[RMDB]
RNA sequence: GGGAACGACUCGAGUAGAGUCGAAAAUGCAACAGUCGUACUAUCCAUCGUUUUAAAGUAAUCAAAUGCUGGAUCUUGUCCGAACCAAUUCAAAAAGACUUGAUGCGGUGUUGUCACUAAUACCCCAACAGGACAAAGGUUUCGACCUUUGUCCUGUAAAAGAAACAACAACAACAAC
Reactivity to 2A3 in 0.01 (KOAc 150mM, MgCl2 10mM, bicine 150mM(pH8.5), 24C), signal-to-noise 2, nucleotides 027 to 126: u040g010c000a000a000c020a050g140u060c010g000u000a000c000u010a000u020c000c000a000u000c000g010u010u020u010u110a200a200a120g130u100a060a140u110c080a000a020a020u010g010c020u010g000g020a010u030c080u060u050g000u010c040c010g010a010a000c020c010a030a030u070u040c010a010a000a060a070a040g120a130c060u030u010g000a010u020g010c010g020g030u040g000u020u020g050u060c020a010c040u110a040a130u090a110c010c020c030c010a030
Reactivity to DMS in 0.01 (KOAc 150mM, MgCl2 10mM, bicine 150mM(pH8.5), 24C), signal-to-noise 1, nucleotides 027 to 126: u000g000c040a010a070c120a060g010u000c050g010u010a050c020u010a000u000c010c010a060u000c010g000u000u000u000u020a100a040a150g010u040a060a050u010c160a020a020a020u010g000c060u000g000g000a000u000c250u010u000g000u000c040c000g000a020a300c070c100a070a190u000u010c120a000a050a000a150a140g000a130c130u000u000g000a060u000g010c300g000g020u000g060u000u010g000u010c010a050c070u010a030a090u000a210c060c000c000c050a110

Source: RMDB library OK2TST, as collected in RNAgym.
The record gives the reactivity of an RNA of 177 nucleotides to 2A3 and DMS.
Reactivities are given for positions 27 through 126.
The 2A3 profile rests on 1,370 reads.